[RMDB]
RNA sequence: GGGAACGACUCGAGUAGAGUCGAAAACCUAAGCUCUUCGCCGGGUAUGGAUCAUCGGUUCACAGACUAGAUGUCGGUGGGUCAUUAUCGAAAAUGGCUUAAGGUAUAGUCGGACCACAUGGGAGACCAUGAUGUGGUGAAUAAGGAGAUACCAUCUACAACCAACAAUGUUCGCAUUGUUGGUUGUAAAAGAAACAACAACAACAAC
Reactivity to 2A3 in 0.01 (KOAc 150mM, MgCl2 10mM, bicine 150mM(pH8.5), 24C), signal-to-noise 3, nucleotides 027 to 156: c000c000u010a050a050g010c020u010c010u130u050c060g000c040c020g030g020g020u100a060u080g060g040a070u050c030a010u020c080g040g000u040u030c050a050c030a090g030a070c020u080a050g020a220u090g050u060c030g010g040u090g040g050g000u010c020a010u000u050a070u080c100g040a140a100a000a070u050g030g000c000u050u060a100a020g040g000u030a030u050a040g050u030c030g080g020a030c040c000a030c000a040u030g000g010g000a110g030a070c010c000a050u070g030a090u090g110u090g010g030u020g000a030a090u110a100a040g060g000a020g020a030u070a090c030c000a040u030c000u010
Reactivity to DMS in 0.01 (KOAc 150mM, MgCl2 10mM, bicine 150mM(pH8.5), 24C), signal-to-noise 1, nucleotides 027 to 156: c040c000u010a040a120g040c070u000c080u000u000c090g000c170c090g000g000g020u000a060u000g000g000a060u010c060a140u000c040g020g000u010u010c010a140c040a050g010a100c060u000a050g010a140u000g000u000c010g060g070u000g000g000g040u000c020a030u000u000a090u010c140g000a050a030a090a120u000g000g030c000u000u000a110a100g030g030u000a070u000a070g030u000c090g010g000a180c020c040a030c000a040u000g020g000g020a300g010a260c010c000a000u000g010a150u010g030u000g040g100u000g010a040a170u000a140a130g010g020a160g010a110u000a090c070c070a150u000c010u000